The data come from the RNA Mapping Database (RMDB), library OK2TRN. An RNA of 177 nucleotides, treated with DMS and 2A3 and read out base by base. The RNA was probed in 150 mM KOAc, 10 mM MgCl2 and 150 mM bicine (pH 8.5) at 24 C. For 2A3 the reverse transcriptase was SuperScript II with manganese. Values cover nucleotides 27 to 126.

[RMDB]
RNA sequence: GGGAACGACUCGAGUAGAGUCGAAAACUGAGACCACAGGCGUGUGCUACCACACCUAGCUAACUUUUGUGGGUUUUGUAGAGACAGGGUCUCGCUAUGUUGCCCAGGCUGAUCUCAAACUCCUGAGCGGUAGAACAAACUUCGGUUUGUUCUACCGAAAAGAAACAACAACAACAAC
Reactivity to DMS in 0.01 (KOAc 150mM, MgCl2 10mM, bicine 150mM(pH8.5), 24C), signal-to-noise 2, nucleotides 027 to 126: c080u010g010a070g010a030c030c020a110c080a060g010g010c080g040u000g020u020g010c070u000a040c130c050a030c090a040c090c080u000a070g020c060u000a110a060c090u000u000u010u000g030u000g000g000g000u000u000u000u010g030u000a050g010a080g000a030c040a140g010g030g000u000c010u000c050g000c080u000a060u000g000u000u010g000c030c030c030a060g000g000c070u000g000a060u010c050u010c050a050a080a130c100u000c020c030u000g010a070g000
Reactivity to 2A3 in 0.01 (KOAc 150mM, MgCl2 10mM, bicine 150mM(pH8.5), 24C), signal-to-noise 1, nucleotides 027 to 126: c000u050g000a000g040a000c010c010a050c060a110g040g100c060g070u070g000u070g060c060u060a040c000c030a050c000a020c000c000u000a020g160c020u080a040a170c070u070u100u140u220g040u130g030g010g140u000u020u130u070g050u040a040g000a000g020a040c050a020g170g010g000u000c000u050c000g010c000u070a070u140g140u120u020g090c040c000c000a000g050g050c040u050g000a090u030c030u040c000a090a060a040c030u020c010c010u050g060a070g020